[RMDB]
RNA sequence: GGGAACGACUCGAGUAGAGUCGAAAAGAAAGAAAGAAAGCGGUUGGGUGGGUCCAUCGACCGUCGUGGCGUAUUCGGACGCUUUACCACGACGCGAGGAAAUAGAGAGACCGACCACCCCCUUUAACAGAGGUAUAGUAGUUCGCUACUAUACCAACCGUACAGCAUUGUUCGCAAUGCUGUACGGAAAAGAAACAACAACAACAAC
Reactivity to 2A3 in 0.01 (KOAc 150mM, MgCl2 10mM, bicine 150mM(pH8.5), 24C), signal-to-noise 1, nucleotides 027 to 156: g060a040a060a000g040a030a050a000g060a050a100a000g110c140g090g110u160u130g070g030g050u120g060g000g010u000c000c000a100u080c020g000a040c090c020g020u000c000g000u000g010g000c020g010u060a150u030u190c150g060g020a030c040g010c020u040u170u050a010c000c000a000c000g000a000c000g000c010g030a030g050g050a000a000a160u190a020g130a000g000a000g000a020c000c050g000a040c000c000a050c000c000c000c000c020u020u090u120a170a100c130a070g070a060g090g020u000a000u000a000g000u000a000g010u010u030c150g000c090u000a000c000u000a000u000a000c000c000a000a010